[RMDB]
RNA sequence: GGGAACGACUCGAGUAGAGUCGAAAACCUACUCAAUACGUCCUCGUCGUACAGAACGGUAACAUGUUUUCCGAACAUCCGCGCUUGGGUAUACGAGUAUACACCUGACCCAACCCUCGCCAACGGGAGUGCAUCCACGAGUUCGCUCGUGGAUGAAGCUAUAACACUUAUUCGUAAGUGUUAUAGCAAAAGAAACAACAACAACAAC
Reactivity to DMS in 0.01 (KOAc 150mM, MgCl2 10mM, bicine 150mM(pH8.5), 24C), signal-to-noise 3, nucleotides 027 to 156: c050c000u000a030c000u000c050a120a160u000a070c040g020u000c010c010u000c010g020u010c080g000u010a150c060a070g020a100a160c050g010g000u020a060a120c060a150u000g010u000u000u000u000c060c040g000a070a110c040a070u000c020c000g020c030g000c030u030u000g040g020g050u000a050u010a060c080g020a140g030u000a130u000a090c030a090c030c010u000g010a060c010c000c020a090a050c030c030c010u000c080g060c020c040a080a080c050g000g000g050a110g010u010g050c000a020u010c000c000a000c010g000a050g010u000u000c300g020c040u010c010g030u040g010g000a000u000g010a000a120
Reactivity to 2A3 in 0.01 (KOAc 150mM, MgCl2 10mM, bicine 150mM(pH8.5), 24C), signal-to-noise 8, nucleotides 027 to 156: c010c000u020a030c020u050c040a070a100u060a110c040g070u050c010c020u020c010g070u030c010g030u090a070c030a070g090a170a040c020g040g030u110a070a030c080a140u150g070u050u030u050u050c020c030g020a040a030c020a090u040c040c040g040c010g000c070u040u060g030g000g020u040a050u030a110c060g020a030g080u030a020u040a060c100a060c010c040u090g070a080c020c000c010a030a050c020c000c010u030c020g030c020c030a060a050c030g030g030g000a050g040u070g030c000a010u000c000c000a010c000g000a000g010u060u080c190g060c060u000c000g000u010g000g000a000u000g000a000a000
The record gives the reactivity of an RNA of 207 nucleotides to DMS and 2A3. DMS adducts were read by reverse transcription with MarathonRT. It was measured as part of the RMDB library M2RFPK. The RNA was probed in 150 mM KOAc, 10 mM MgCl2 and 150 mM bicine (pH 8.5) at 24 C. For DMS, 6,942 sequencing reads were counted. 2A3 adducts were read by reverse transcription with SuperScript II with manganese.